[RMDB]
RNA sequence: GGGAACGACUCGAGUAGAGUCGAAAACACUUUUUUUGCAACUUCUUUUAAGGCCUUGCAUUGCAAAGAGUUGGGAGAGUUGCAGUGACAGUGCCAGUAAAAAGUUACAGUUCUUGACCGACACCGGUGCACGUCACUUUUCGAUUGUGACAUAGGAGCGUGGUGUAUGAUUCGUCAUACACCACGCAAAAGAAACAACAACAACAAC
Reactivity to 2A3 in 0.01 (KOAc 150mM, MgCl2 10mM, bicine 150mM(pH8.5), 24C), signal-to-noise 2, nucleotides 027 to 156: c030a010c000u170u090u000u000u010u130u080g020c020a020a010c010u240u180c030u150u160u050u120a120a060g040g000c000c030u020u010g010c030a210u070u120g020c020a040a030a090g100a150g080u090u090g030g010g000a050g020a000g000u000u000g000c000a000g020u020g020a030c000a030g060u030g050c000c000a030g070u150a030a120a040a040a040g080u080u060a130c050a090g000u040u050c000u060u030g110a050c000c040g090a090c010a070c130c020g000g030u050g050c050a020c060g000u000c000a050c000u090u120u070u140c120g090a170u070u110g000u000g020a040c010a020u200a010g210g000a110